[RMDB]
RNA sequence: GGGAACGACUCGAGUAGAGUCGAAAAUCAAGAAUCUCUCAGUAUCUACGUGCAGUACGUAAAAAUCUUCCUGUUCAUGAAUCUACAGAGAGCUUACCAGAAAACGAACGCAUCAAAGAAGCUCUAGGUGUCAAUCCACAUUCGUGUGGAUUGACACAAAAGAAACAACAACAACAAC
Reactivity to 2A3 in 0.01 (KOAc 150mM, MgCl2 10mM, bicine 150mM(pH8.5), 24C), signal-to-noise 1, nucleotides 027 to 126: u080c060a050a000g050a100a050u010c000u050c000u020c020a000g030u060a080u030c000u040a000c040g030u000g030c040a040g110u020a020c100g050u050a000a200a000a000a100u080c100u150u080c020c090u060g050u090u010c020a030u070g180a180a090u050c040u050a060c130a000g090a000g000a000g060c000u010u030a060c010c000a040g060a030a110a020a010c120g000a090a050c100g010c050a040u120c100a150a160a090g050a030a000g010c030u030c000u030a100g000
Reactivity to DMS in 0.01 (KOAc 150mM, MgCl2 10mM, bicine 150mM(pH8.5), 24C), signal-to-noise 1, nucleotides 027 to 126: u010c130a080a180g030a130a060u000c020u010c030u000c010a040g000u000a020u010c020u000a080c040g040u000g000c080a010g050u000a030c060g010u010a030a070a110a030a130u000c060u010u010c000c050u000g000u020u010c060a070u010g000a070a150u000c060u000a040c070a120g010a080g090a000g020c060u030u000a070c100c100a220g010a040a110a090a040c100g000a020a000c150g030c080a080u010c100a030a070a110g000a080a210g000c050u000c020u000a080g010
Source: RMDB library OK2TRN, as collected in RNAgym. Chemical mapping of a 177-nucleotide RNA with 2A3 and DMS. DMS adducts were read by reverse transcription with MarathonRT. The DMS profile rests on 543 reads. The reactions ran in a buffer of 150 mM KOAc, 10 mM MgCl2 and 150 mM bicine (pH 8.5), at 24 C. 2A3 adducts were read by reverse transcription with SuperScript II with manganese.